[RMDB]
RNA sequence: GGGAACGACUCGAGUAGAGUCGAAAAUCAGAUCGACAUCGUCCUUACCGAACGCGAGCUCGUACGUCUCACCGACGCGGUACUCGCCCUCGCCGCGCACGAUGUGGAUGCGGAACUCGCCGGAGCGUGCAUCGAUGUCCUUGUGCAGUAUGCGAUGUCAUCUGAAUAGUUUCGACUAUUCAGAUGAAAAAGAAACAACAACAACAAC
Reactivity to DMS in 0.01 (KOAc 150mM, MgCl2 10mM, bicine 150mM(pH8.5), 24C), signal-to-noise 2, nucleotides 027 to 156: u010c030a110g010a080u010c030g010a030c010a040u000c000g000u000c100c050u020u010a110c050c030g000a180a160c120g020c030g010a060g060c010u010c020g130u000a140c030g000u000c000u000c040a070c070c040g010a080c000g030c020g030g000u010a070c110u000c100g110c050c070c040u000c050g000c000c010g000c000g020c040a100c020g030a030u000g000u000g020g000a050u000g030c070g050g020a070a040c000u000c000g000c050c030g010g020a220g020c060g000u000g030c050a070u010c040g020a080u010g010u000c010c080u000u000g040u000g010c000a170g010u000a070u010g000c010g020a210u010g010
Reactivity to 2A3 in 0.01 (KOAc 150mM, MgCl2 10mM, bicine 150mM(pH8.5), 24C), signal-to-noise 7, nucleotides 027 to 156: u130c040a030g060a140u100c020g020a010c000a010u020c000g040u030c020c050u070u110a100c020c010g040a130a050c040g000c010g010a010g000c040u020c040g070u150a070c110g070u010c070u040c050a020c000c030g050a040c010g000c010g010g000u040a050c070u050c160g090c040c010c020u080c060g000c000c000g000c010g010c020a100c130g050a070u090g030u070g050g000a020u020g000c040g070g000a030a040c000u000c000g000c000c020g010g010a020g020c120g040u090g020c020a040u090c030g020a020u040g010u030c010c010u120u120g050u040g010c040a070g080u190a090u200g050c060g080a070u100g040
The record gives the reactivity of an RNA of 207 nucleotides to DMS and 2A3. The reactions ran in a buffer of 150 mM KOAc, 10 mM MgCl2 and 150 mM bicine (pH 8.5), at 24 C. For 2A3 the reverse transcriptase was SuperScript II with manganese. The DMS profile rests on 7,256 reads. Source: RMDB library OK3TST, as collected in RNAgym.